[RMDB]
RNA sequence: GGGAACGACUCGAGUAGAGUCGAAAAUACGGUGGACGACAGCGUACUGCUGCCUUCUGCUUUCUCUCCUGUUCCGAGGUCUCCGAGGAGGUCUCGUCAGCGUGUGUCGUACACCCUGUGCCGGAAACAUUUUACUAGCAUUCGUGCUAGUAAAAUGAAAAGAAACAACAACAACAAC
Reactivity to DMS in 0.01 (KOAc 150mM, MgCl2 10mM, bicine 150mM(pH8.5), 24C), signal-to-noise 8, nucleotides 027 to 126: u040a060c200g010g020u010g000g010a020c020g000a040c020a120g020c020g010u030a100c110u040g010c050u010g010c030c020u000u010c030u000g010c060u010u000u010c030u010c030u020c020c010u000g000u010u010c110c030g020a040g000g010u000c000u000c010c050g020a200g020g010a030g010g000u010c010u000c020g010u030c060a070g000c060g010u020g020u010g010u000c030g000u000a050c060a030c000c010c050u010g020u000g000c070c020g000g010a150a080a190
Reactivity to 2A3 in 0.01 (KOAc 150mM, MgCl2 10mM, bicine 150mM(pH8.5), 24C), signal-to-noise 9, nucleotides 027 to 126: u200a020c040g000g010u010g010g020a010c010g010a010c010a010g010c020g070u120a140c070u120g030c010u020g010c000c000u060u060c020u040g070c000u020u100u010c040u000c000u010c020c020u070g080u190u030c040c030g010a010g000g020u010c010u000c020c020g040a100g080g040a010g000g030u010c040u030c050g090u070c030a040g010c030g030u120g030u010g010u120c020g010u030a020c010a030c030c010c020u090g050u080g080c020c030g050g040a070a080a020

Conditions: 150 mM KOAc, 10 mM MgCl2 and 150 mM bicine (pH 8.5), 24 C. An RNA of 177 nucleotides, treated with DMS and 2A3 and read out base by base. In probing experiments dimethyl sulfate is read out at A N1 and C N3, which are open when not base-paired. For DMS, 36,670 sequencing reads were counted. 2A3 adducts were read by reverse transcription with SuperScript II with manganese.